[RMDB]
RNA sequence: GGGAACGACUCGAGUAGAGUCGAAAAAUGAUGCCUGCUGAUGUCCGUGAGGCUGGUAUGUCUAAGAGUGAGGUUGAGCCAUCUUUAGCAGCCAGUCUGAGAUGUGCCAAAUGUCUUGAUCAGUCUACAUUAGCCCGGAUUUCGAUCCGGGCUAAUGAAAAGAAACAACAACAACAAC
Reactivity to DMS in 0.01 (KOAc 150mM, MgCl2 10mM, bicine 150mM(pH8.5), 24C), signal-to-noise 2, nucleotides 027 to 126: a070u040g000a010u010g020c010c030u000g000c020u000g030a060u010g010u000c030c010g040u050g020a050g050g070c020u000g000g000u000a040u000g000u050c030u000a000a040g000a040g000u000g020a090g010g010u010u030g000a110g030c050c040a070u010c020u010u000u010a010g000c020a060g040c050c060a020g020u010c010u000g000a080g050a030u000g020u010g010c040c020a030a160a080u010g000u000c020u030u000g000a260u010c050a050g000u010c020u010a200
Reactivity to 2A3 in 0.01 (KOAc 150mM, MgCl2 10mM, bicine 150mM(pH8.5), 24C), signal-to-noise 2, nucleotides 027 to 126: a000u090g040a090u050g020c000c020u000g080c010u040g150a020u060g020u040c060c010g080u050g040a000g010g000c010u000g050g020u080a300u160g000u050c030u030a000a010g000a080g130u110g100a100g120g000u160u050g070a000g130c000c000a100u000c030u010u110u070a010g040c040a000g000c060c030a020g040u010c000u020g020a010g010a040u020g100u130g010c040c030a120a080a000u080g040u050c000u080u180g030a030u080c040a000g060u000c030u040a040
Structure probing data (DMS and 2A3) for a 177-nucleotide construct. Reactivities are given for positions 27 through 126. DMS adducts were read by reverse transcription with MarathonRT. The RNA was probed in 150 mM KOAc, 10 mM MgCl2 and 150 mM bicine (pH 8.5) at 24 C. For 2A3 the reverse transcriptase was SuperScript II with manganese.